[RMDB]
RNA sequence: GGGAACGACUCGAGUAGAGUCGAAAAAUUCUGGAUGUUUGAUAUAGUUCUUCUUGAGAGCCACAUCACGUGGUGAAUUUUGACAGUGAGAAAACCUCAGCAUUUGUUUAUACGUAAGAUAACCCCAAAGCAUACAUUUUGCUUUUAAAUUAUCACGCCACAAUCUCAUGUUCGCAUGAGAUUGUGGAAAAGAAACAACAACAACAAC
Reactivity to 2A3 in 0.01 (KOAc 150mM, MgCl2 10mM, bicine 150mM(pH8.5), 24C), signal-to-noise 1, nucleotides 027 to 156: a000u120u080c100u100g140g000a020u030g070u080u200u090g080a010u040a000u070a300g010u050u050c030u070u040c030u110u080g080a090g030a010g160c010c000a040c000a080u200c000a030c120g000u000g000g040u030g000a070a070u020u160u150u050g050a080c040a090g000u010g120a000g000a000a070a040a010c000c000u030c000a010g000c030a040u000u030u030g090u080u090u070a180u050a030c080g030u000a120a060g000a120u010a030a090c000c000c090c000a000a010a000g000c000a090u080a080c090a170u300u160u040u100g000c000u000u060u000u120a000a250a000u120u010a050u010c030a040c090g040

An RNA of 207 nucleotides, treated with 2A3 and read out base by base.
For 2A3, 336 sequencing reads were counted.
The RNA was probed in 150 mM KOAc, 10 mM MgCl2 and 150 mM bicine (pH 8.5) at 24 C.
The data come from the RNA Mapping Database (RMDB), library OK3TST.